Chemical mapping of a 177-nucleotide RNA with DMS and 2A3.
2A3 adducts were read by reverse transcription with SuperScript II with manganese.
It was measured as part of the RMDB library RFM100.
For DMS, 1,293 sequencing reads were counted.

RNA sequence: GGGAACGACUCGAGUAGAGUCGAAAAAUAGCGCAAACGGUCAUUUGUGUAUCACUAUUCAUAAGAUUAACUAUUUACCAGUGGUAAUAAAAAUAAAAGUAAGUCAAUGGACAACAACAAUACUGAAGGGAGUGUAAAAUUUCGAUUUUACACUCCCAAAAGAAACAACAACAACAAC
Reactivity to DMS in 0.01 (KOAc 150mM, MgCl2 10mM, bicine 150mM(pH8.5), 24C), signal-to-noise 1, nucleotides 027 to 126: a090u100a070g000c130g010c070a010a010a110c140g000g000u010c010a120u020u000u010g040u010g000u090a110u000c000a020c100u000a030u070u000c060a000u050a080a030g020a220u000u000a060a000c010u070a160u050u000u000a020c060c000a060g010u100g020g010u000a060a140u110a000a040a070a130a110u080a060a100a060a050g000u000a190a030g000u000c000a060a000u000g000g000a050c160a000a000c290a010a080c140a170a000u080a080c020u000g000a170a140
Reactivity to 2A3 in 0.01 (KOAc 150mM, MgCl2 10mM, bicine 150mM(pH8.5), 24C), signal-to-noise 1, nucleotides 027 to 126: a000u020a000g170c040g000c040a010a000a060c060g160g220u040c100a030u000u010u070g000u000g000u020a030u040c000a030c000u080a070u200u000c000a050u040a130a040g000a000u020u220a080a040c030u060a090u000u200u020a100c100c050a010g090u070g020g000u040a010a000u050a040a070a020a000a000u280a000a090a090a000g110u110a120a000g000u050c010a130a120u020g000g130a000c000a160a000c020a040a040c000a040a040u120a100c000u000g000a010a010
The RNA was probed in 150 mM KOAc, 10 mM MgCl2 and 150 mM bicine (pH 8.5) at 24 C.